[RMDB]
Source: RMDB library 15KLIB, as collected in RNAgym.
This 170-nucleotide RNA was probed chemically with 2A3 and DMS.
The RNA was probed in 150 mM KOAc, 10 mM MgCl2 and 150 mM bicine (pH 8.5) at 24 C.
High DMS reactivity at an A or C suggests that its Watson-Crick edge is free.
Reactivities are given for positions 27 through 129.

RNA sequence: GGGAACGACUCGAGUAGAGUCGAAAAUCCCCCGGGGGGCCUCUUCCUAGGUCCGGAGUCUAUCUCCAUCUGGUCCGUUCGGGCCCUCUUCGCCGGGGGAGCCCCCUCUCCAUCCUUGUCUUUCUUUAGAGCUUUGUGUUCGCACAAAGCAAAAGAAACAACAACAACAAC
Reactivity to 2A3 in 0.01 (KOAc 150mM, MgCl2 10mM, bicine 150mM(pH8.5), 24C), signal-to-noise 5, nucleotides 027 to 129: u000c000c000c000c000c000g010g000g000g020g010g000c010c000u080c060u200u090c040c080u080a060g010g000u000c020c010g020g000a020g020u030c110u260a220u110c040u050c030c020a110u010c050u080g000g030u000c010c030g050u100u160c060g000g010g000c000c000c010u070c030u050u080c010g010c010c010g000g000g000g000g000a000g010c000c000c000c000c000u020c000u020c010c030a120u070c020c050u040u060g040u070c050u040u070u000c000u030u050u050a150g010a010
Reactivity to DMS in 0.01 (KOAc 150mM, MgCl2 10mM, bicine 150mM(pH8.5), 24C), signal-to-noise 3, nucleotides 027 to 129: u020c030c020c000c010c080g050g050g000g030g020g050c040c010u050c170u010u040c080c030u020a000g010g030u030c050c010g000g000a010g090u080c140u080a210u000c030u000c010c000a110u040c140u050g030g000u010c020c070g030u040u040c300g000g000g000c000c010c020u010c000u020u050c150g010c080c050g000g010g000g000g000a030g000c050c030c030c070c010u000c000u030c000c000a060u020c040c040u040u090g000u050c190u010u020u020c040u000u020u000a100g010a170